[RMDB]
RNA sequence: GGGAACGACUCGAGUAGAGUCGAAAAUGAACUAACAUCUCUGGAGCAUUUGUCUAACUAUACUGACAGGAAAGGGAGUGGUGGGAUCUGGAGUUGCUCUGCGGAACAGGCUGACAAACUUAGAAGAAUGUGACGUAAAUUUCGAUUUACGUCACAUAAAAGAAACAACAACAACAAC
Reactivity to DMS in 0.01 (KOAc 150mM, MgCl2 10mM, bicine 150mM(pH8.5), 24C), signal-to-noise 5, nucleotides 027 to 126: u010g020a090a120c080u010a060a100c110a080u010c030u000c020u000g020g010a080g010c050a110u000u010u020g000u000c010u000a090a090c140u000a100u000a110c150u000g020a050c030a080g010g010a070a080a100g010g000g000a110g010u010g010g020u000g000g000g000a160u000c050u000g010g010a070g010u000u000g010c050u010c040u000g010c060g010g020a080a060c120a090g010g020c050u000g010a120c090a040a040a040c130u000u010a060g010a100a130g010a100
Reactivity to 2A3 in 0.01 (KOAc 150mM, MgCl2 10mM, bicine 150mM(pH8.5), 24C), signal-to-noise 2, nucleotides 027 to 126: u050g000a050a030c060u040a020a050c050a120u010c020u000c030u080g060g020a020g030c030a050u080u020u070g040u010c010u010a020a040c040u050a090u090a270c050u040g080a010c020a060g020g050a100a060a050g000g030g050a120g030u070g000g090u100g010g000g000a010u010c020u040g010g040a040g000u040u040g060c030u010c020u070g020c050g040g020a050a070c020a040g000g040c000u010g010a050c070a030a080a010c050u100u090a040g020a160a000g070a090